Structure probing data (DMS and 2A3) for a 177-nucleotide construct. The reactions ran in a buffer of 150 mM KOAc, 10 mM MgCl2 and 150 mM bicine (pH 8.5), at 24 C. In probing experiments dimethyl sulfate is read out at A N1 and C N3, which are open when not base-paired. The 2A3 profile rests on 3,331 reads. Reactivities are given for positions 27 through 126. It was measured as part of the RMDB library M2PK90. For DMS, 4,764 sequencing reads were counted.
[RMDB]
RNA sequence: GGGAACGACUCGAGUAGAGUCGAAAAAAUUUUUUCGGUCUCGUCAGACAAAUCAGUGACAUGAUGGUCAUAGCGAAAGCACACGCACGAAAUGUCACUGAUGAAAAAGAGCGUGUGACCAAUUUAACACUAUAGCUAACUUCGGUUAGCUAUAGUGAAAAGAAACAACAACAACAAC
Reactivity to DMS in 0.01 (KOAc 150mM, MgCl2 10mM, bicine 150mM(pH8.5), 24C), signal-to-noise 4, nucleotides 027 to 126: a090a040u010u010u000u000u000u000c010g020g000u000c000u000c150g020u000c150a090g000a070c080a110a140a020u010c000a000g000u000g000a010c000a020u000g010a200u000g010g010u000c050a080u000a110g010c010g000a120a060a130g010c020a070c150a050c140g010c030a080c080g000a040a080a010u000g000u000c000a000c000u000g000a010u000g000a040a030a040a070a080g000a040g010c010g000u010g020u000g000a120c010c000a060a140u010u000u000a070a160
Reactivity to 2A3 in 0.01 (KOAc 150mM, MgCl2 10mM, bicine 150mM(pH8.5), 24C), signal-to-noise 3, nucleotides 027 to 126: a000a000u180u110u020u000u020u050c020g020g030u020c020u000c010g080u120c040a010g030a170c040a030a130a020u010c000a000g000u000g010a000c000a000u060g030a050u100g040g050u080c060a110u240a040g000c010g070a140a030a030g020c000a040c010a010c130g030c000a040c080g070a120a070a030u000g010u000c000a000c000u000g000a000u010g000a000a010a000a000a000g070a010g020c050g000u060g060u070g050a020c000c000a020a040u140u140u110a060a020